[RMDB]
RNA sequence: GGGAACGACUCGAGUAGAGUCGAAAACGGGCGUUGGCCAGCACUGCAAUGUCAUCGAUGCGCACUAGCAAUGCAGACCAAAAUGCGAAACUGAGAAAUAAAGCAUCUAUGAUAAGGCUUACCACACGUUUAUGCGUGCGUUUCAAACCAAACAAGCGGUCCCCUUGUAUUUCGAUACAAGGGGACCAAAAGAAACAACAACAACAAC
Reactivity to 2A3 in 0.01 (KOAc 150mM, MgCl2 10mM, bicine 150mM(pH8.5), 24C), signal-to-noise 1, nucleotides 027 to 156: c000g040g010g010c040g020u040u060g020g000c040c030a010g020c060a090c130u090g000c060a070a080u120g000u060c000a000u020c070g010a000u000g010c000g000c020a010c070u060a060g000c020a080a030u100g020c030a050g040a150c060c100a070a110a000a000u120g030c080g110a030a020a060c040u140g020a010g070a140a110a090u240a050a170a020g010c010a010u040c040u040a000u020g010a000u010a010a070g020g000c000u000u050a150c000c000a030c020a000c110g020u000u000u140a090u140g000c060g040u020g010c020g010u000u070u140c020a060a000a000c010c030a120a040a050c010a150a000g180c020
The record gives the reactivity of an RNA of 207 nucleotides to 2A3. The data come from the RNA Mapping Database (RMDB), library OK3TST. Conditions: 150 mM KOAc, 10 mM MgCl2 and 150 mM bicine (pH 8.5), 24 C.